Structure probing data (2A3) for a 207-nucleotide construct. 2A3 adducts were read by reverse transcription with SuperScript II with manganese.

RNA sequence: GGGAACGACUCGAGUAGAGUCGAAAACCAGCUUGCCUGUGUCCUAGGGAAUAGGAAGGUCAUCCUUCACAGGAUCGUGUGGAAGUCCUGCUCGGGGCGGAAGCAUUAAAACCAUUCGAGCUAGUCAAAAACCGGCUGAUCUUCGGAUCAGCCGGAACAAUUCCUCCUCGUUCGCGAGGAGGAAUUGAAAAGAAACAACAACAACAAC
Reactivity to 2A3 in 0.01 (KOAc 150mM, MgCl2 10mM, bicine 150mM(pH8.5), 24C), signal-to-noise 1, nucleotides 027 to 156: c000c000a010g030c020u020u060g010c030c000u040g020u010g040u040c020c020u060a130g000g020g130a210a110u130a140g040g030a060a060g110g000u060c050a130u190c030c010u060u130c000a050c010a010g010g000a060u090c080g060u000g010u020g000g050a040a050g000u030c010c010u050g090c090u080c180g000g010g020g000c000g000g010a000a000g020c000a000u040u240a020a050a040a050c090c100a060u070u140c030g020a000g050c020u020a040g240u230c090a050a090a000a150a120c000c010g000g000c000u010g000a000u010c030u090u120c300g020g020a000u000c000a000g000c000c000g000g000a000a000